[RMDB]
An RNA of 177 nucleotides, treated with 2A3 and DMS and read out base by base. For 2A3 the reverse transcriptase was SuperScript II with manganese. It was measured as part of the RMDB libraries RFM100 and RFMREP. For 2A3, 3,160 sequencing reads were counted. DMS adducts were read by reverse transcription with MarathonRT.
RNA sequence: GGGAACGACUCGAGUAGAGUCGAAAAAGUACCGUGAGGGAAAGGUGAAAAGCACCCCGGGAGGGGAGUGAAACAGUACCUGAAACCGUGCGCCCGCAAGGCGUCGGAGCACCCUUUUAGAGGUGUGAUCUUCACCUGUUUUCGAACAGGUGAAGAUAAAAGAAACAACAACAACAAC
Reactivity to 2A3 in 0.01 (KOAc 150mM, MgCl2 10mM, bicine 150mM(pH8.5), 24C), signal-to-noise 3, nucleotides 027 to 126: a020g030u020a010c000c010g020u100g060a090g030g000g020a040a130a050g020g020u020g040a110a030a010a020g040c000a040c000c000c000c030g010g120g030a150g050g020g050g000a070g070u110g030a040a060a050c080a020g060u030a010c000c010u040g010a090a020a020c000c000g090u120g050c010g000c010c030c010g060c070a040a030g000g000c000g000u020c000g000g000a010g020c000a030c010c000c000u030u050u060u140a090g050a060g000g030u050g020u040g050
Reactivity to DMS in 0.01 (KOAc 150mM, MgCl2 10mM, bicine 150mM(pH8.5), 24C), signal-to-noise 6, nucleotides 027 to 126: a080g020u010a110c010c000g010u040g000a110g010g000g010a060a070a060g010g000u010g000a050a080a090a190g000c030a060c010c010c010c010g010g090g000a160g010g010g010g030a020g020u010g000a130a090a100c170a100g000u030a080c020c010u010g000a120a100a130c020c000g000u020g000c000g010c000c020c020g020c300a130a300g000g000c000g020u000c010g000g000a130g010c040a050c000c000c020u000u000u020u000a100g020a070g000g000u010g000u010g010